Chemical mapping of a 177-nucleotide RNA with 2A3 and DMS.
Reactivities are given for positions 27 through 126.
Source: RMDB libraries RFM100 and RFMREP, as collected in RNAgym.
The RNA was probed in 150 mM KOAc, 10 mM MgCl2 and 150 mM bicine (pH 8.5) at 24 C.
RNA sequence: GGGAACGACUCGAGUAGAGUCGAAAACCGCCCAAGGCGCCGCCGAUGGCCGCGCGGGUGUUGUCGCCUGCGAAGGCGGUACCACCGACCAGACUCAGGGACAACAGGAGUAUCGAGGAAUACUUCAGCAUUCUUUUUAGUUCGCUAAAAAGAAUGCAAAAGAAACAACAACAACAAC
Reactivity to 2A3 in 0.01 (KOAc 150mM, MgCl2 10mM, bicine 150mM(pH8.5), 24C), signal-to-noise 9, nucleotides 027 to 126: c010c010g020c010c010c000a040a060g190g000c010g000c010c010g010c010c020g270a240u300g030g000c020c010g000c010g000c000g010g000g010u050g020u020u020g030u030c100g070c120c010u020g010c030g030a050a020g000g000c000g000g010u080a200c010c030a040c010c010g090a220c030c010a030g030a090c010u000c040a010g000g000g020a010c010a030a010c020a070g000g010a010g010u030a010u050c110g090a190g050g110a150a010u010a030c000u010u020c010a010
Reactivity to DMS in 0.01 (KOAc 150mM, MgCl2 10mM, bicine 150mM(pH8.5), 24C), signal-to-noise 6, nucleotides 027 to 126: c040c010g020c040c010c020a170a160g010g020c020g050c020c150g010c020c030g020a160u010g010g040c020c180g020c040g010c020g010g000g030u000g000u000u010g010u000c000g010c010c010u000g000c150g000a300a130g000g010c000g000g010u010a050c150c130a070c010c010g010a130c040c030a080g000a300c110u000c010a040g000g000g010a020c050a060a020c090a090g010g020a030g010u000a000u000c010g010a160g010g020a140a020u010a000c010u000u000c040a130